[RMDB]
RNA sequence: GGGAACGACUCGAGUAGAGUCGAAAAGAUAUGGAAUGGUAAGCUAGCUCCCAUGUCGGAAACGACAUGGAGAGCUUGGACCUUACACAUUCCUAAGUCAAAAGGUGCGCUCUUCGGAGCGCACCAACAAUAAAUAAGACUUCGGUCUUAUUUAUUGAAAAGAAACAACAACAACAAC
Reactivity to 2A3 in 0.01 (KOAc 150mM, MgCl2 10mM, bicine 150mM(pH8.5), 24C), signal-to-noise 2, nucleotides 027 to 126: g010a010u030a000u040g000g000a010a000u000g000g000u000a010a010g000c020u020a010g020c010u020c030c000c000a010u010g000u000c000g010g020a050a000a010c020g010a010c000a000u000g020g010a080g010a010g010c000u000u080g000g020a000c000c000u020u010a020c300a010c010a050u010u000c000c000u000a010a000g000u010c020a000a010a060a280g000g000u000g000c120g040c000u040c000u070u200c300g150g010a010g060c010g000c020a000c000c000a000a000
Reactivity to DMS in 0.01 (KOAc 150mM, MgCl2 10mM, bicine 150mM(pH8.5), 24C), signal-to-noise 4, nucleotides 027 to 126: g000a010u000a040u020g000g000a010a010u000g000g020u000a000a020g000c010u000a010g030c000u000c000c000c000a000u000g010u000c000g020g000a030a010a050c010g020a010c000a010u000g000g010a040g010a000g020c000u000u000g010g000a010c300c000u000u000a010c000a150c010a000u000u000c000c000u000a000a100g000u000c000a140a100a180a140g010g030u000g000c000g020c000u000c000u000u020c290g030g010a010g000c000g040c030a000c000c010a000a030